[RMDB]
RNA sequence: GGGAACGACUCGAGUAGAGUCGAAAAGGUCUGCGGAACCGGCGAGUACACCGGAAUUGCCAGGACGACCGGGUCCUUUCUUGGAUUAACCCGCUCAAUGCCUGGAGAUUUGGGCGUGCCCCCGCGAAGUGCUUAUGUUCUUCGGAACAUAAGCACUAAAAGAAACAACAACAACAAC
Reactivity to DMS in 0.01 (KOAc 150mM, MgCl2 10mM, bicine 150mM(pH8.5), 24C), signal-to-noise 2, nucleotides 027 to 126: g000g000u000c070u000g000c030g010g030a230a070c050c000g010g050c150g070a140g020u000a010c120a090c000c000g020g000a060a030u020u020g020c000c010a030g030g000a030c040g000a030c090c000g000g020g000u000c010c020u000u020u020c160u050u050g000g000a080u030u040a200a110c010c010c020g010c300u010c010a090a080u030g000c000c000u020g000g000a070g000a020u000u000u030g010g000g030c060g020u000g000c000c020c070c000c010g000c030g010a120
Reactivity to 2A3 in 0.01 (KOAc 150mM, MgCl2 10mM, bicine 150mM(pH8.5), 24C), signal-to-noise 5, nucleotides 027 to 126: g040g020u030c030u070g060c040g030g010a070a110c050c000g020g010c030g050a040g060u050a040c020a020c030c000g010g010a010a020u040u030g050c000c000a010g000g020a020c040g000a010c020c000g000g000g010u040c030c000u090u180u140c110u110u200g010g000a010u150u050a070a050c000c000c000g000c010u010c020a060a120u260g030c010c010u020g020g000a020g000a030u000u020u090g110g010g000c050g000u060g020c000c000c000c020c010g000c040g020a040
Annotation: Structure probing data (DMS and 2A3) for a 177-nucleotide construct. The RNA was probed in 150 mM KOAc, 10 mM MgCl2 and 150 mM bicine (pH 8.5) at 24 C.